[RMDB]
RNA sequence: GGGAACGACUCGAGUAGAGUCGAAAAAGACUAUAAUCAGGUGGGCGCAAGCUUAAGGUAUAGUCCAGUCCACCCAGGAAGGGGGUCCAAUGAAGUACGGGGAAAUUCAGCUCAUCCCCUAGGGCAUUGGAGGGAAGUGCACUACAAGAAAAGUGCCGUUAUCACCUGAGUUCGCUCAGGUGAUAACAAAAGAAACAACAACAACAAC
Reactivity to 2A3 in 0.01 (KOAc 150mM, MgCl2 10mM, bicine 150mM(pH8.5), 24C), signal-to-noise 1, nucleotides 027 to 156: a000g060a000c080u070a050u100a120a090u110c040a030g170g000u040g050g000g000c020g010c060a000a080g000c000u060u070a020a070g070g040u060a100u040a040g000u040c000c010a000g080u000c010c000a010c020c000c000a010g080g040a050a110g030g000g000g030g000u000c000c000a000a060u020g000a010a050g080u020a000c070g000g000g000g000a030a020a010u240u130c100a110g000c070u080c050a050u020c000c000c000c000u000a010g010g010g000c020a000u020u020g030g040a040g020g010g010a040a090g060u130g090c000a020c010u110a100c110a150a120g090a090a160a000a000g000u030g000c000c010
Structure probing data (2A3) for a 207-nucleotide construct.
2A3 adducts were read by reverse transcription with SuperScript II with manganese.
High 2A3 reactivity points to a flexible backbone, as in loops and unpaired stretches.
The reactions ran in a buffer of 150 mM KOAc, 10 mM MgCl2 and 150 mM bicine (pH 8.5), at 24 C.